[RMDB]
RNA sequence: GGGAACGACUCGAGUAGAGUCGAAAAAAUGCUAAACGGUCUUUCAACCAGAUCGACAUUUAUGUCGCCCGAGUCACAGACAUACGGACGAGGGUCUCCUAAAUCGUCGAAAACGUCUCUGUACAAGCUAAUGCAUAGUUGGUCAACUACAAACUCGACCAAGAAAUGGAUUCGUCCAUUUCUUGGUAAAAGAAACAACAACAACAAC
Reactivity to DMS in 0.01 (KOAc 150mM, MgCl2 10mM, bicine 150mM(pH8.5), 24C), signal-to-noise 2, nucleotides 027 to 156: a050a050u010g030c040u020a070a090a150c050g020g000u000c020u010u000u000c110a050a140c030c020a040g000a150u000c000g020a050c020a000u000u000u010a020u010g020u010c090g010c030c000c000g020a300g010u000c030a210c100a190g000a060c090a110u010a190c110g030g000a060c000g000a290g020g010g020u020c010u010c030c020u000a040a030a030u010c120g000u020c010g020a090a040a090a080c050g010u000c030u000c030u030g010u000a050c060a080a060g000c060u010a030a080u000g010c040a120u000a060g030u000u010g000g010u000c040a090a050c060u000a100c050a080a050a070c030u000c020g020
Reactivity to 2A3 in 0.01 (KOAc 150mM, MgCl2 10mM, bicine 150mM(pH8.5), 24C), signal-to-noise 4, nucleotides 027 to 156: a000a000u090g000c050u070a090a050a040c080g020g020u030c020u050u180u140c090a090a070c020c020a040g030a160u010c000g000a010c000a000u010u020u000a050u050g050u020c040g000c020c010c010g000a010g000u010c030a030c050a300g100a120c030a230u260a110c120g050g010a000c000g000a040g000g000g020u000c010u010c000c000u020a030a020a010u080c120g020u000c000g010a000a020a030a120c060g090u010c030u000c020u070g060u080a050c020a080a040g000c030u100a070a010u070g010c020a050u020a070g040u030u030g050g010u060c040a060a040c040u100a040c070a040a100a030c030u080c120g040